[RMDB]
RNA sequence: GGGAACGACUCGAGUAGAGUCGAAAAGCACCUGGGUUCGCCCAGGUGCAAAGAUCAGUAGCAUGCAUGAUCAAAUCCGAUAGGAUGCUACAGGGAAACCAAAAAGCCAGUGCUUCGGCACUGGCAAGUUUGGGUAAGAGUUCGCUCUUACCCAAACAAAAGAAACAACAACAACAAC
Reactivity to 2A3 in 0.01 (KOAc 150mM, MgCl2 10mM, bicine 150mM(pH8.5), 24C), signal-to-noise 1, nucleotides 027 to 126: g000c010a000c000c000u010g080g000g030u070u150c220g080c040c000c000a000g000g000u010g000c000a000a000a000g020a030u120c050a020g000u000a000g000c010a010u080g080c070a090u190g070a030u180c030a010a180a100u120c070c030g030a010u040a100g150g010a000u000g010c000u000a000c010a050g010g040g030a050a040a060c030c040a010a070a000a060a010g000c000c000a000g000u000g010c000u070u100c190g070g000c010a000c000u010g010g010c020a000a000
Reactivity to DMS in 0.01 (KOAc 150mM, MgCl2 10mM, bicine 150mM(pH8.5), 24C), signal-to-noise 1, nucleotides 027 to 126: g000c000a020c000c010u010g000g000g020u010u000c160g020c000c000c000a010g020g010u000g020c010a010a000a050g000a160u000c060a040g020u010a020g010c000a010u000g000c050a130u010g010a030u010c030a060a100a110u010c100c080g010a070u000a100g010g000a020u000g020c010u000a000c020a150g000g000g000a040a130a140c060c030a000a060a120a070a200g010c000c010a000g000u000g020c000u000u000c250g010g000c000a010c000u000g010g010c000a000a000

The record gives the reactivity of an RNA of 177 nucleotides to 2A3 and DMS. For 2A3 the reverse transcriptase was SuperScript II with manganese. For DMS, 829 sequencing reads were counted. DMS adducts were read by reverse transcription with MarathonRT. The reactions ran in a buffer of 150 mM KOAc, 10 mM MgCl2 and 150 mM bicine (pH 8.5), at 24 C.